RNA sequence: GGGAACGACUCGAGUAGAGUCGAAAAGCUAGCCUAUACGUAGGCUAGCAAGAAAACUCAUGCCAAAUAAAACGCUCACAGGCAUGAGAAAAGUGAGCGAAAAGCCGACUGCUACGGCAGUCGGCAACCAUACCGCAGUGUUCGCACUGCGGUAUGGAAAAGAAACAACAACAACAAC
Reactivity to 2A3 in 0.01 (KOAc 150mM, MgCl2 10mM, bicine 150mM(pH8.5), 24C), signal-to-noise 2, nucleotides 027 to 126: g000c000u000a010g000c000c000u000a010u010a090c210g120u050a020g000g000c000u000a000g000c000a000a000g030a000a070a000a000c020u000c000a000u000g000c000c000a220a300a020u270a100a120a130a170c200g000c000u000c000a000c000a010g020g000c000a000u010g000a010g000a060a030a000a000g020u010g000a000g030c010g000a120a160a000a020g010c000c000g000a010c000u000g000c000u040a050c300g190g000c000a000g000u020c000g010g000c000a000a000
Record summary:
Source: RMDB library OK1LIB, as collected in RNAgym. The record gives the reactivity of an RNA of 177 nucleotides to 2A3. The 2A3 profile rests on 1,626 reads. The reactions ran in a buffer of 150 mM KOAc, 10 mM MgCl2 and 150 mM bicine (pH 8.5), at 24 C.